[RMDB]
RNA sequence: GGGAACGACUCGAGUAGAGUCGAAAAAUACAGGGUAAGCGUAAGGGGCUACAUUGUGAAGGUUGGUGACCUACCGUGAUGAACUGAAAAAGAUUCAAAGUAGCGGUUUGAGCGAUGUGUAUAGACAGUAAACUACGAAGUUCGCUUCGUAGUUUACAAAAGAAACAACAACAACAAC
Reactivity to DMS in 0.01 (KOAc 150mM, MgCl2 10mM, bicine 150mM(pH8.5), 24C), signal-to-noise 4, nucleotides 027 to 126: a070u000a090c060a070g010g010g020u010a080a090g030c100g040u010a090a070g020g000g010g010c050u020a070c070a080u010u000g020u000g020a070a070g010g000u000u000g000g000u000g000a110c030c030u000a050c030c020g000u000g000a160u010g020a020a020c060u000g000a040a060a130a080a070g000a130u010u000c020a040a080a160g020u010a160g000c020g000g000u000u010u000g010a070g000c080g000a020u010g020u000g010u000a070u010a070g000a050c190a070
Reactivity to 2A3 in 0.01 (KOAc 150mM, MgCl2 10mM, bicine 150mM(pH8.5), 24C), signal-to-noise 1, nucleotides 027 to 126: a000u120a000c010a020g030g020g050u100a130a000g020c020g060u050a030a050g020g000g010g000c010u050a040c030a040u080u090g020u010g090a040a000g030g020u060u110g040g030u080g060a030c000c010u020a040c020c000g030u020g020a150u030g000a010a030c020u070g000a160a150a000a000a000g090a090u060u020c030a080a100a070g000u010a020g050c040g050g000u050u070u100g010a010g000c030g000a020u050g050u000g020u050a040u030a120g050a040c030a040
Source information: Structure probing data (DMS and 2A3) for a 177-nucleotide construct. The reactions ran in a buffer of 150 mM KOAc, 10 mM MgCl2 and 150 mM bicine (pH 8.5), at 24 C.